An RNA of 177 nucleotides, treated with 2A3 and DMS and read out base by base.

[RMDB]
RNA sequence: GGGAACGACUCGAGUAGAGUCGAAAAAAAUUUCCUUGGUAGCUUUACUCUGUGCUUCCAUGAUAUGAGUGAAUGCAUAGAAAUUGCAGAGGAAUCCAAAGGACUGUGCUUCACCUAUGGCUCAGUGAAACGCAGACCAAUUCGUUGGUCUGCGUUUAAAAGAAACAACAACAACAAC
Reactivity to 2A3 in 0.01 (KOAc 150mM, MgCl2 10mM, bicine 150mM(pH8.5), 24C), signal-to-noise 1, nucleotides 027 to 126: a020a000a030u000u000u000c000c000u010u000g100g060u130a050g000c000u070u000u000a120c040u080c000u000g000u000g000c000u060u000c000c000a020u040g130a090u100a050u070g250a220g000u130g040a000a020u250g000c030a000u000a000g000a000a000a000u150u070g040c100a000g000a020g000g000a110a080u060c020c010a040a020a020g120g040a000c000u000g040u010g000c000u000u070c030a120c120c000u040a040u180g040g000c050u020c000a010g000u000g030
Reactivity to DMS in 0.01 (KOAc 150mM, MgCl2 10mM, bicine 150mM(pH8.5), 24C), signal-to-noise 1, nucleotides 027 to 126: a000a010a030u040u000u060c000c000u000u000g000g020u060a070g000c000u020u000u030a070c080u000c020u000g000u000g040c030u000u010c020c040a140u070g000a090u020a070u000g020a150g020u040g000a030a010u000g040c000a000u020a040g000a030a080a020u000u020g050c010a080g000a010g050g020a100a030u110c040c050a120a010a010g020g020a070c000u010g000u010g000c030u010u020c010a120c120c040u050a060u040g000g010c040u000c050a000g020u000g010
The reactions ran in a buffer of 150 mM KOAc, 10 mM MgCl2 and 150 mM bicine (pH 8.5), at 24 C. The 2A3 profile rests on 591 reads.